[RMDB]
RNA sequence: GGGAACGACUCGAGUAGAGUCGAAAACUGAUACGAUCAGCAGGCAUGCGAAAGGAUGGAGUGCUUAGCCGACGCGUACGGAAACCAUCCCUCUCUGCCGUGCUUCGCCAUCCGAAACGUACGCGUACGGAAACCAUCCUAGCAUGCGAAAGGAUGGGUAUGGGUAGAUGUUCGCAUCUACCCAUACAAAAGAAACAACAACAACAAC
Reactivity to DMS in 0.01 (KOAc 150mM, MgCl2 10mM, bicine 150mM(pH8.5), 24C), signal-to-noise 2, nucleotides 027 to 156: c040u020g010a130u010a050c080g000a160u000c000a040g010c010a040g020g040c010a020u000g010c030g000a180a090a190g000g000a090u020g020g010a220g010u000g020c180u000u000a160g020c060c000g020a060c020g050c020g000u010a010c000g010g010a130a080a150c020c010a100u000c000c010c010u000c040u020c080u000g000c020c010g020u000g020c040u000u000c040g010c030c030a080u000c080c050g010a060a070a090c010g030u000a010c020g020c000g000u000a100c020g000g000a090a070a120c010c000a010u000c010c000u000a130g000c020a030u000g000c000g010a030a060a080g000g000a030u000g030g030
Reactivity to 2A3 in 0.01 (KOAc 150mM, MgCl2 10mM, bicine 150mM(pH8.5), 24C), signal-to-noise 4, nucleotides 027 to 156: c030u030g000a030u110a160c090g050a100u060c010a010g050c030a040g090g000c000a000u060g000c020g100a250a070a020g000g000a000u010g010g010a070g060u220g110c130u260u130a060g060c010c000g000a000c000g000c000g000u000a000c000g020g020a100a010a000c000c010a050u020c000c020c000u030c010u010c010u070g050c020c020g060u060g050c030u030u050c030g020c030c010a030u070c010c040g060a080a060a020c010g000u000a000c010g040c020g020u060a240c000g010g000a050a020a010c000c000a000u000c010c000u030a030g000c020a000u020g020c010g020a030a010a010g010g010a020u030g010g000